[RMDB]
RNA sequence: GGGAACGACUCGAGUAGAGUCGAAAAGCAUACAACUUCGGUUGUAUGCAACGACAGAGUUGACUGUCAUAAACAAGGUAACAUGUGAGUUACAAUAACACAUUGCAGCAGCUUUCGAGCUGCUGAAGGGAAUAAUAGUUUUCGAACUAUUAUUCCCAAAAGAAACAACAACAACAAC
Reactivity to DMS in 0.01 (KOAc 150mM, MgCl2 10mM, bicine 150mM(pH8.5), 24C), signal-to-noise 7, nucleotides 027 to 126: g000c000a000u000a000c000a010a010c000u000u020c220g040g010u000u000g010u000a000u000g010c000a030a040c140g000a010c000a010g000a060g000u000u000g000a120c000u010g000u000c000a130u000a070a090a130c090a100a090g000g010u020a060a110c140a060u000g000u000g000a080g000u000u000a020c020a040a040u000a090a040c060a020c070a050u000u010g020c000a000g000c000a000g010c000u000u000u020c190g010a010g020c000u000g010c000u000g000a030a070
Reactivity to 2A3 in 0.01 (KOAc 150mM, MgCl2 10mM, bicine 150mM(pH8.5), 24C), signal-to-noise 8, nucleotides 027 to 126: g000c000a000u000a000c010a010a000c000u040u090c200g110g000u010u010g000u010a010u000g000c000a000a010c050g000a000c000a000g010a000g060u040u040g080a170c000u000g000u010c010a020u160a030a120a020c050a050a060g210g010u090a050a020c040a090u130g080u060g170a080g030u040u050a010c010a000a040u130a090a020c060a010c020a080u080u280g030c000a000g000c000a000g000c000u040u040u190c230g110a010g000c000u000g000c000u000g000a000a010
Source: RMDB library M2PK50, as collected in RNAgym. The record gives the reactivity of an RNA of 177 nucleotides to DMS and 2A3. High DMS reactivity at an A or C suggests that its Watson-Crick edge is free. Reactivities are given for positions 27 through 126. The reactions ran in a buffer of 150 mM KOAc, 10 mM MgCl2 and 150 mM bicine (pH 8.5), at 24 C.